[RMDB]
RNA sequence: GGGAACGACUCGAGUAGAGUCGAAAAACCUAUGGAUUCGUCCAUAGGUGCUGGCGCGCGGCCUUUGUCCAGUCGCGUGUGCGUGGUGGGCGAUAUACGCGCAAUAGUGACAAUUCGUUGUCACUAACCUCCGUUAGAACUUCGGUUCUAACGGAGGAAAAGAAACAACAACAACAAC
Reactivity to DMS in 0.01 (KOAc 150mM, MgCl2 10mM, bicine 150mM(pH8.5), 24C), signal-to-noise 1, nucleotides 027 to 126: a020c000c000u000a000u000g000g020a040u000u010c170g010u000c010c000a000u000a010g000g010u000g000c090u010g030g020c080g020c000g010c020g000g000c060c060u000u000u000g020u000c050c080a070g020u000c010g020c020g000u010g010u000g020c000g010u000g010g010u010g000g000g020c010g020a030u010a140u010a060c030g000c000g000c040a190a170u000a020g000u010g010a000c000a010a030u000u000c160g010u000u000g000u000c000a000c000u010a020a090